[RMDB]
RNA sequence: GGGAACGACUCGAGUAGAGUCGAAAACACGUGUUUCAAUUAGAACAAACAGAGAGCUUCCAUCACAGACCGACUUUAACCUUGCCGUUCACCACCGAUUCCGGUGACAAGAGUCAUCGUCGAUAUUAUGUUGUUGUUGCUUCGGCAACAACAACAUAAAAGAAACAACAACAACAAC
Reactivity to 2A3 in 0.01 (KOAc 150mM, MgCl2 10mM, bicine 150mM(pH8.5), 24C), signal-to-noise 1, nucleotides 027 to 126: c070a000c000g060u010g040u080u070u020c100a140a060u090u030a140g000a180a000c000a080a080a020c030a120g130a040g000a000g000c040u030u030c000c030a080u030c020a130c000a050g060a100c070c000g000a000c000u100u000u000a000a020c040c000u000u000g000c070c000g050u010u060c050a050c210c000a000c000c030g050a130u100u120c010c010g000g020u000g000a030c070a130a000g060a000g020u000c000a000u000c000g020u000c020g030a000u000a180u180u010
Record summary: This 177-nucleotide RNA was probed chemically with 2A3. 2A3 adducts were read by reverse transcription with SuperScript II with manganese. The data come from the RNA Mapping Database (RMDB), library RFM100. The reactions ran in a buffer of 150 mM KOAc, 10 mM MgCl2 and 150 mM bicine (pH 8.5), at 24 C.